[RMDB]
RNA sequence: GGGAACGACUCGAGUAGAGUCGAAAAUACGCCAAUUUCGAUUGGCGUAACACGCAAACCGGCCGAAAGGCAUUUUAAGCGUACGGUGGCGAAAGCCUAAAAACGCACUGUCAUUCGUGACAGUGAAGUUUCACUUAAAAUUCGUUUUAAGUGAAACAAAAGAAACAACAACAACAAC
Reactivity to 2A3 in 0.01 (KOAc 150mM, MgCl2 10mM, bicine 150mM(pH8.5), 24C), signal-to-noise 9, nucleotides 027 to 126: u060a000c000g000c000c000a010a010u030u070u100c200g140a020u010u000g000g000c000g000u000a000a020c030a000c010g000c010a030a100a060c030c020g060g000c010c000g080a090a040a010g020g000c000a010u030u040u030u070a070a010g010c000g000u020a040c080g140g060u060g010g000c010g040a090a020a010g010c000c000u090a110a060a010a000a010c080g000c020a000c000u000g000u000c000a020u040u050c180g100u020g000a000c000a000g000u000g020a030a010
Reactivity to DMS in 0.01 (KOAc 150mM, MgCl2 10mM, bicine 150mM(pH8.5), 24C), signal-to-noise 9, nucleotides 027 to 126: u000a010c000g010c000c000a010a010u000u000u010c170g010a030u000u000g000g000c000g010u000a010a050c140a050c040g000c030a040a090a140c100c070g010g010c000c010g010a090a080a160g010g020c010a050u000u000u000u010a100a160g010c020g020u000a100c190g000g010u000g000g010c010g000a100a060a160g010c000c010u000a020a040a050a070a080c230g000c010a010c000u000g010u000c000a040u000u010c170g020u000g010a010c000a010g010u000g010a030a060
Conditions: 150 mM KOAc, 10 mM MgCl2 and 150 mM bicine (pH 8.5), 24 C. Structure probing data (2A3 and DMS) for a 177-nucleotide construct. For 2A3, 55,601 sequencing reads were counted. The DMS profile rests on 22,325 reads.